[RMDB]
RNA sequence: GGGAACGACUCGAGUAGAGUCGAAAAAUCGAAGUCAUCAACUGACAGCGGAAAAUGUAAAGAAUGGAAAUAUUUCUCAGGAAAUAUUACCUAUAACCGUUAAAGGAGAAAUAUUCAAUACUGAUGAUCUAUGUUGUCUUUUCGAAGACAACAUAGAAAAAGAAACAACAACAACAAC
Reactivity to 2A3 in 0.01 (KOAc 150mM, MgCl2 10mM, bicine 150mM(pH8.5), 24C), signal-to-noise 8, nucleotides 027 to 126: a000u110c070g020a110a010g040u000c010a030u020c030a030a070c020u060g030a060c050a010g010c000g020g090a130a090a020a070u290g050u280a110a110a080g120a080a100u140g030g000a020a050a000u000a000u010u040u000c050u000c070a090g100g030a020a000a000u020a000u020u030a020c010c000u030a040u070a140a040c000c000g020u020u070a100a080a030g080g030a090g110a060a120a020u180a080u090u130c080a080a050u040a190c050u070g050a070u040g000a000
Reactivity to DMS in 0.01 (KOAc 150mM, MgCl2 10mM, bicine 150mM(pH8.5), 24C), signal-to-noise 4, nucleotides 027 to 126: a060u020c070g000a090a100g000u000c030a050u000c080a070a170c210u000g010a100c190a070g000c020g000g010a120a060a090a130u050g010u020a050a060a110g000a090a050u040g000g000a050a030a000u000a010u000u000u010c010u000c190a120g000g000a000a030a020u000a000u000u000a030c010c020u000a050u030a160a130c010c010g010u030u020a040a170a070g000g000a120g000a050a040a120u030a060u000u000c050a040a140u030a070c090u010g010a060u020g000a100

Source: RMDB library OK1LIB, as collected in RNAgym. Chemical mapping of a 177-nucleotide RNA with 2A3 and DMS. 2A3 adducts were read by reverse transcription with SuperScript II with manganese.